Record summary
Structure probing data (DMS and 2A3) for a 177-nucleotide construct. 2A3 adducts were read by reverse transcription with SuperScript II with manganese.
[RMDB]
RNA sequence: GGGAACGACUCGAGUAGAGUCGAAAAGAUAUGGAGGAUUGGAGGGAGAAAGUUCGGAAACGAAGUUUCAUCGAUCUCCACGGUCCUCCUAAGUCAAAACGGAUAUAUUCUUCGGAAUAUAUCCGAACAUGCGUGAUUAGUUCGCUAAUCACGCAUGAAAAGAAACAACAACAACAAC
Reactivity to DMS in 0.01 (KOAc 150mM, MgCl2 10mM, bicine 150mM(pH8.5), 24C), signal-to-noise 3, nucleotides 027 to 126: g010a050u000a300u010g000g000a000g010g030a010u010u010g010g000a040g000g000g020a060g010a030a000a050g010u000u000c010g010g000a090a030a130c000g020a030a000g000u000u000u000c000a220u000c140g000a100u020c000u000c000c010a060c300g010g020u000c000c010u000c000c000u000a010a060g000u010c020a080a050a080a190c010g000g010a030u000a000u000a010u010u000c000u000u020c270g010g000a040a000u000a010u000a010u010c000c000g000a050a040
Reactivity to 2A3 in 0.01 (KOAc 150mM, MgCl2 10mM, bicine 150mM(pH8.5), 24C), signal-to-noise 2, nucleotides 027 to 126: g030a010u070a060u170g000g010a000g000g000a020u010u140g090g000a090g060g070g020a020g000a000a040a020g130u030u060c010g020g000a080a060a010c000g050a090a050g070u000u060u020c100a210u270c050g080a120u030c020u000c010c010a000c040g030g030u000c000c000u000c000c000u000a020a020g070u010c060a030a000a080a060c010g010g000a000u020a000u000a000u000u000c000u050u040c290g030g000a000a000u010a010u000a000u000c000c000g000a010a000